The data come from the RNA Mapping Database (RMDB), library M2PK50. Chemical mapping of a 177-nucleotide RNA with DMS and 2A3. The RNA was probed in 150 mM KOAc, 10 mM MgCl2 and 150 mM bicine (pH 8.5) at 24 C. For 2A3 the reverse transcriptase was SuperScript II with manganese. DMS adducts were read by reverse transcription with MarathonRT.
RNA sequence: GGGAACGACUCGAGUAGAGUCGAAAAGGAACGUUGUUCGCAACGUUCCGUGCCGGAAACGGACAUGACGAUCGGGCGCAUGUCGGGAAACCGUAAACGCGAGCAUCAUGGUGUUCGCACCAUGAAAACAUCGGAAUAUGUUCGCAUAUUCCGAUGUAAAAGAAACAACAACAACAAC
Reactivity to DMS in 0.01 (KOAc 150mM, MgCl2 10mM, bicine 150mM(pH8.5), 24C), signal-to-noise 8, nucleotides 027 to 126: g010g010a000a010c000g030u000u000g010u010u010c160g030c000a090a010c000g010u000u000c000c000g020u010g010c070c000g020g010a070a080a250c040g000g010a040c030a020u000g000a110c050g000a130u000c140g000g010g010c060g010c020a040u000g000u000c010g010g000g000a080a080a110c070c010g010u000a020a090a100c150g010c040g010a060g010c180a170u000c010a010u000g000g020u000g010u000u010c190g010c010a010c010c010a020u000g000a040a080a100
Reactivity to 2A3 in 0.01 (KOAc 150mM, MgCl2 10mM, bicine 150mM(pH8.5), 24C), signal-to-noise 7, nucleotides 027 to 126: g010g000a000a000c010g010u010u020g020u080u090c180g000c090a000a010c000g010u010u000c000c000g000u040g030c020c020g050g010a120a130a030c060g060g010a010c010a020u050g050a070c030g040a100u160c080g030g060g000c050g000c030a010u030g020u040c030g030g000g000a130a070a010c020c010g030u110a060a080a060c120g010c050g060a030g050c020a080u040c000a010u030g030g010u010g020u030u050c160g000c050a000c000c000a010u030g020a050a030a010